Notes
Structure probing data (2A3 and DMS) for a 177-nucleotide construct. 2A3 adducts were read by reverse transcription with SuperScript II with manganese. DMS adducts were read by reverse transcription with MarathonRT. The data come from the RNA Mapping Database (RMDB), library OK2TST. The 2A3 profile rests on 2,142 reads.
RNA sequence: GGGAACGACUCGAGUAGAGUCGAAAACGAUUACCAUAUCAUCGCGCCCAGUCCUUGGCCGUUUCUGAGCUCGGUCGGCGCAUUUGUGCUCGCUAUCGGCGGCAUUGCCUGGAUGCGUUACAUCAAACAUAUGGAGCUCAUUCGUGAGCUCCAUAUGAAAAGAAACAACAACAACAAC
Reactivity to 2A3 in 0.01 (KOAc 150mM, MgCl2 10mM, bicine 150mM(pH8.5), 24C), signal-to-noise 2, nucleotides 027 to 126: c020g000a080u060u100a110c020c020a040u060a020u160c070a030u070c010g030c000g000c020c000c000a000g020u070c020c010u040u030g130g030c000c010g010u000u100u090c120u140g030a040g000c020u030c090g010g010u040c040g080g030c040g050c050a000u010u060u180g000u020g000c060u050c040g000c010u040a040u220c080g040g010c000g020g020c030a030u010u050g000c010c000u000g000g020a010u020g010c020g040u060u080a030c010a070u120c060a030a040a120
Reactivity to DMS in 0.01 (KOAc 150mM, MgCl2 10mM, bicine 150mM(pH8.5), 24C), signal-to-noise 4, nucleotides 027 to 126: c140g020a050u020u000a130c060c060a060u010a050u010c050a060u000c020g010c060g010c020c000c020a070g010u000c020c020u000u010g010g020c020c020g000u010u000u000c060u020g020a080g010c120u010c100g000g010u000c090g010g000c050g010c080a100u000u000u000g040u000g010c000u010c090g020c090u000a090u000c080g020g010c010g010g000c060a020u000u000g020c060c030u000g010g000a040u000g010c030g010u010u000a090c190a090u000c140a060a110a210